The data come from the RNA Mapping Database (RMDB), library M2RFPK. This 207-nucleotide RNA was probed chemically with DMS and 2A3. The reactions ran in a buffer of 150 mM KOAc, 10 mM MgCl2 and 150 mM bicine (pH 8.5), at 24 C. For 2A3, 474 sequencing reads were counted.
RNA sequence: GGGAACGACUCGAGUAGAGUCGAAAAAUUCUGUACAUAAAAGUCGAAAGUAUUGCUAUAGUUAAGGUUGCGCUUGCCUAUUCAGGCAUACUUCUCAGGAUGGCGCGUUGCAGUCCAACAAGAUCCAAAAACAACGGCCACUUCGGUGGCCGUUGAAUCUACCUAUAACGUUCGCGUUAUAGGUAGAAAAAGAAACAACAACAACAAC
Reactivity to DMS in 0.01 (KOAc 150mM, MgCl2 10mM, bicine 150mM(pH8.5), 24C), signal-to-noise 1, nucleotides 027 to 156: a060u010u000c010u010g010u010a120c050a070u000a100a110a100a170g010u000c060g050a100a050a100g000u010a030u000u010g040c020u030a130u000a070g010u000u000a050a040g020g020u000u010g060c050g000c070u000u010g010c060c050u000a140u010u010c110a150g020g030c000a030u000a070c030u010u000c070u000c060a170g030g010a070u010g010g010c020g010c120g010u010u000g030c020a140g050u000c030c000a050a110c070a070a060g010a120u000c010c020a030a050a050a110a140c020a030a000c000g030g000c000c000a060c010u010u000c260g080g020u000g000g060c020c010g050u000u000g000a000a050
Reactivity to 2A3 in 0.01 (KOAc 150mM, MgCl2 10mM, bicine 150mM(pH8.5), 24C), signal-to-noise 1, nucleotides 027 to 156: a000u130u070c040u060g070u050a030c030a000u210a150a060a020a080g100u100c110g060a070a040a040g010u030a010u020u150g030c020u090a060u100a200g090u050u090a030a050g000g010u050u090g010c100g000c030u080u060g030c000c010u040a100u050u200c130a060g000g000c000a000u030a010c010u000u030c080u010c060a000g060g070a040u050g000g040c020g000c030g000u010u100g000c010a000g020u010c000c000a000a010c010a070a100g080a080u100c080c020a050a000a070a070a090c000a000a000c000g010g020c000c000a000c000u010u020c120g040g050u020g000g060c000c000g000u000u000g000a000a000